An RNA of 177 nucleotides, treated with 2A3 and DMS and read out base by base. The RNA was probed in 150 mM KOAc, 10 mM MgCl2 and 150 mM bicine (pH 8.5) at 24 C. For DMS, 22,038 sequencing reads were counted. It was measured as part of the RMDB library OK2TRN.

RNA sequence: GGGAACGACUCGAGUAGAGUCGAAAAGUGACAGUCCAUGAGGCUCAAGGUUGUACUUAUGACCGUGUGACCCUUAUUGCUACGAUGGAUGCGCGCGGCCUUAUUGCGACGUCCCGGGCGCAUGCAACGUUAUACUUCGUUUCGACGAAGUAUAACGAAAAGAAACAACAACAACAAC
Reactivity to 2A3 in 0.01 (KOAc 150mM, MgCl2 10mM, bicine 150mM(pH8.5), 24C), signal-to-noise 9, nucleotides 027 to 126: g110u090g050a050c060a030g040u000c030c000a060u070g030a030g050g000c020u030c070a030a050g040g010u030u030g050u080a100c050u190u240a090u240g050a030c010c050g030u050g040u030g090a110c020c010c020u030u110a140u100u180g040c040u070a060c050g140a100u100g080g030a010u030g030c010g000c010g010c020g040g000c010c010u130u140a250u140u190g070c080g030a050c040g080u070c020c000c020g030g070g010c010g000c010a010u100g070c010a070a030
Reactivity to DMS in 0.01 (KOAc 150mM, MgCl2 10mM, bicine 150mM(pH8.5), 24C), signal-to-noise 9, nucleotides 027 to 126: g010u000g000a090c070a090g010u000c070c050a110u000g010a100g010g010c060u000c070a100a110g010g010u000u000g020u000a120c200u010u000a070u000g000a050c050c060g000u000g010u000g000a100c090c010c030u000u000a100u010u000g010c070u000a080c110g010a120u000g010g000a050u000g010c020g010c020g010c030g000g010c120c050u000u000a090u010u000g010c100g000a060c080g010u000c070c010c010g000g000g010c010g010c010a010u000g000c080a060a180